[RMDB]
An RNA of 177 nucleotides, treated with DMS and 2A3 and read out base by base.
For 2A3, 2,507 sequencing reads were counted.
2A3 is a SHAPE reagent: it acylates the 2'-hydroxyl of flexible nucleotides of all four kinds.
2A3 adducts were read by reverse transcription with SuperScript II with manganese.
It was measured as part of the RMDB library VIROID.
The DMS profile rests on 1,660 reads.

RNA sequence: GGGAACGACUCGAGUAGAGUCGAAAAGCUCCGAACUGGCGUCGUCCGGCUCUCCUCGGAGCCUCGCUGCUCUGGGCGGAAGAGUCUUCUGACUUUUCUAGCCUAUUCAGCAUUGCGCUCUUGAGGCGCCUAGUUGUAUCUUCGGAUACAACUAGGCAAAAGAAACAACAACAACAAC
Reactivity to DMS in 0.01 (KOAc 150mM, MgCl2 10mM, bicine 150mM(pH8.5), 24C), signal-to-noise 1, nucleotides 027 to 126: g000c030u010c020c050g030a070a060c040u000g000g000c120g020u020c120g000u010c050c020g010g010c100u010c080u000c020c000u000c000g000g010a000g020c000c020u010c120g000c010u000g000c020u000c030u000g000g010g010c030g000g000a010a010g000a000g010u000c000u000u010c300u000g000a020c010u000u000u000u000c000u000a150g030c010c010u000a000u000u020c010a060g000c000a120u000u000g000c150g010c020u000c000u000u010g030a030g010g000c300
Reactivity to 2A3 in 0.01 (KOAc 150mM, MgCl2 10mM, bicine 150mM(pH8.5), 24C), signal-to-noise 2, nucleotides 027 to 126: g010c010u000c030c030g030a180a060c050u080g130g000c010g080u060c010g050u040c060c020g090g000c050u000c010u040c010c000u010c010g010g000a000g000c000c000u020c050g000c000u000g000c000u000c000u010g000g030g000c000g000g000a010a000g000a000g010u000c000u270u040c100u170g020a010c000u050u030u010u000c020u020a150g010c000c000u000a020u120u110c010a000g000c000a000u010u180g020c130g020c020u030c060u080u300g030a020g020g020c030